RNA sequence: GGGAACGACUCGAGUAGAGUCGAAAAUCGGGCGUCUACAGCAGGAGCAAUAGCUUCAGCUGUUGGAGCUUUGGGUUCCGGUGCAGAUUCGUCCACUUCAGCAACAAACGACGCCGACGGAGCUUCACAAGCCUAAGGUUUUCGAACCUUAGGCUUGAAAAGAAACAACAACAACAAC
Reactivity to 2A3 in 0.01 (KOAc 150mM, MgCl2 10mM, bicine 150mM(pH8.5), 24C), signal-to-noise 4, nucleotides 027 to 126: u080c030g000g020g010c020g070u040c020u040a040c010a030g020c000a020g000g020a000g010c030a120a300u090a180g010c020u000u000c000a020g020c010u050g030u050u030g030g010a000g000c010u080u070u130g120g030g000u080u030c020c020g000g030u100g000c050a020g020a130u040u060c040g020u040c060c040a050c040u050u060c050a060g060c020a010a040c010a060a190a020c080g010a010c000g010c030c010g010a010c000g040g010a030g000c020u050u050c010a030
Reactivity to DMS in 0.01 (KOAc 150mM, MgCl2 10mM, bicine 150mM(pH8.5), 24C), signal-to-noise 3, nucleotides 027 to 126: u020c110g000g010g000c020g000u000c020u000a040c000a030g010c010a070g000g000a000g030c020a230a190u030a100g010c000u000u000c000a020g000c010u000g010u000u020g010g010a080g000c030u010u060u030g030g010g020u000u000c020c030g000g030u000g010c070a080g000a020u000u000c050g030u000c030c030a080c070u030u010c060a080g020c080a120a090c130a060a070a060c130g000a030c030g020c000c000g000a080c020g000g010a090g000c030u020u030c080a210
An RNA of 177 nucleotides, treated with 2A3 and DMS and read out base by base. Source: RMDB library OK1LIB, as collected in RNAgym. The DMS profile rests on 6,178 reads. Reactivities are given for positions 27 through 126. For DMS the reverse transcriptase was MarathonRT. For 2A3 the reverse transcriptase was SuperScript II with manganese.